Conditions: 150 mM KOAc, 10 mM MgCl2 and 150 mM bicine (pH 8.5), 24 C. Structure probing data (2A3 and DMS) for a 177-nucleotide construct. It was measured as part of the RMDB library OK2TRN.
RNA sequence: GGGAACGACUCGAGUAGAGUCGAAAAUGAUGUGUCGCUCAUAGGUAAAUAUAAGUCUUAUGUCACUGUUAUAGAUACCGAAGGAGACUCGUUCUUAGGCGGUAGAGAUAUAGACAAGAGUAUAGAACAUUCCUAAGCAGUUCGCUGCUUAGGAAUGAAAAGAAACAACAACAACAAC
Reactivity to 2A3 in 0.01 (KOAc 150mM, MgCl2 10mM, bicine 150mM(pH8.5), 24C), signal-to-noise 3, nucleotides 027 to 126: u080g040a050u090g050u020g060u080c040g010c030u030c030a060u050a060g070g020u080a070a070a060u170a040u020a110a090g030u000c020u070u130a060u100g110u030c010a010c060u040g040u190u050a120u040a100g040a050u050a060c040c020g000a040a010g100g040a050g030a040c030u000c090g090u170u000c000u040u020a050g090g000c010g030g020u050a060g020a010g010a040u040a020u080a090g020a000c040a070a050g030a010g080u040a040u050a170g030a050a010
Reactivity to DMS in 0.01 (KOAc 150mM, MgCl2 10mM, bicine 150mM(pH8.5), 24C), signal-to-noise 5, nucleotides 027 to 126: u000g010a060u010g010u010g020u000c060g020c070u000c020a090u000a110g020g010u000a030a080a120u000a070u000a070a110g010u010c020u000u010a070u000g010u000c020a120c090u000g010u000u000a070u010a050g010a210u000a020c060c010g000a090a090g010g000a100g010a060c030u010c180g010u010u000c010u000u000a150g010g000c020g000g010u000a030g010a070g010a040u000a030u000a050g000a020c050a060a120g000a090g000u000a090u000a090g010a110a170
Notes:
In probing experiments dimethyl sulfate is read out at A N1 and C N3, which are open when not base-paired.